[RMDB]
RNA sequence: GGGAACGACUCGAGUAGAGUCGAAAAGAUUCGCCGUCGGCAUUUCCCCAGCAGCCAUGACCUACCAGGCUGCGGUGCGGCUCGCCGCACAGGUCAUCCCUCAUCGGGCGCGUCCUGCGUCUUUCCAAAAACUGACUAACCUUCGGGUUAGUCAGAACCAUAGUUCGAUCUUCGGAUCGAACUAUGGAAAAGAAACAACAACAACAAC
Reactivity to 2A3 in 0.01 (KOAc 150mM, MgCl2 10mM, bicine 150mM(pH8.5), 24C), signal-to-noise 1, nucleotides 027 to 156: g020a110u100u100c050g020c090c070g130u130c090g020g030c080a060u020u050u050c000c000c000c000a040g010c000a000g020c000c010a090u140g020a050c010c010u130a250c080c080a050g000g000c000u010g010c010g020g000u010g000c030g000g050c030u030c130g220c010c000g020c000a020c000a010g000g000u000c010a030u020c010c060c020u080c040a120u210c080g020g020g000c020g000c000g060u170c060c190u190g000c000g020u000c000u010u090u050c020c000a000a030a040a020a040c010u010g000a020c000u000a000a000c010c000u040u050c200g040g000g000u000u000a000g000u000c010a000g000a000a000
Description: Structure probing data (2A3) for a 207-nucleotide construct. For 2A3, 751 sequencing reads were counted. Source: RMDB library M2RFPK, as collected in RNAgym.